[RMDB]
RNA sequence: GGGAACGACUCGAGUAGAGUCGAAAACACUGUAGGCUUCCUUCCAUGCCUACGGUUAGAUGCUUGAAUUUCUUUGGUGGCAUUCUGUCGACACAUGGAAGAUUGAUUUUAGGUAAGAUGUAUCUCCGUAUUGUGUCUCGUUCGCGAGACACAAUACAAAAGAAACAACAACAACAAC
Reactivity to DMS in 0.01 (KOAc 150mM, MgCl2 10mM, bicine 150mM(pH8.5), 24C), signal-to-noise 1, nucleotides 027 to 126: c170a020c010u000g000u000a020g000g000c000u000u020c130c020u030u000c030c040a080u000g000c010c010u010a020c010g000g020u010u010a110g010a060u000g030c050u000u000g000a110a050u000u000u010c080u000u000u020g000g040u020g020g010c050a050u000u010c080u000g010u000c070g020a090c170a040c110a030u020g010g000a020a010g000a230u010u020g000a100u000u000u000u010a120g000g000u020a040a050g020a110u000g020u010a050u000c050u000c040c300
Reactivity to 2A3 in 0.01 (KOAc 150mM, MgCl2 10mM, bicine 150mM(pH8.5), 24C), signal-to-noise 1, nucleotides 027 to 126: c010a020c020u010g060u010a010g000g000c000u130u050c000c000u010u000c000c000a000u080g000c000c030u000a010c000g010g000u010u040a050g020a030u050g000c040u040u150g070a120a190u200u120u180c140u110u110u090g110g000u100g000g000c000a030u120u000c000u050g100u020c050g110a040c010a000c000a090u060g040g020a040a010g010a030u030u200g070a050u020u120u050u160a090g110g050u060a080a070g050a110u060g010u080a070u050c020u000c030c080

An RNA of 177 nucleotides, treated with DMS and 2A3 and read out base by base. The 2A3 profile rests on 809 reads. For DMS, 1,196 sequencing reads were counted.